[RMDB]
RNA sequence: GGGAACGACUCGAGUAGAGUCGAAAAGAAGAGAAUAAAUAGAGGAGUCAGGGUUCGCACACGCUCCGCGAACCUACGGUAACACUGACUGUGGAGCGGAAAAGGCAGAUACUUUACUGCCAAAGAAGCUAUUUACCGGAUUCGUCCGGUAAAUAGCAAAAGAAACAACAACAACAAC
Reactivity to DMS in 0.01 (KOAc 150mM, MgCl2 10mM, bicine 150mM(pH8.5), 24C), signal-to-noise 2, nucleotides 027 to 126: g030a060a020g000a070g000a060a120u000a030a020a060u030a040g010a120g010g010a060g010u000c010a050g000g000g000u040u030c000g020c060a120c150a090c040g000c000u000c000c030g070c000g000a000a010c010c000u040a040c100g000g010u020a030a070c050a170c080u010g000a000c060u020g010u020g020g000a000g040c000g020g000a060a060a020a130g010g010c010a000g030a100u010a040c250u000u010u050a030c010u000g020c000c030a100a080a090g000a130a080
Reactivity to 2A3 in 0.01 (KOAc 150mM, MgCl2 10mM, bicine 150mM(pH8.5), 24C), signal-to-noise 4, nucleotides 027 to 126: g090a030a020g060a010g040a040a130u230a190a060a070u190a100g130a050g160g020a040g020u040c040a030g030g020g020u010u010c000g010c010a040c010a010c100g020c010u000c000c000g000c000g000a000a000c000c000u000a030c050g020g010u040a040a000c050a010c090u040g060a010c000u020g060u080g170g000a000g000c000g000g020a070a120a000a000g010g000c000a000g000a010u070a120c020u070u130u110a110c000u010g000c000c000a000a060a000g020a020a000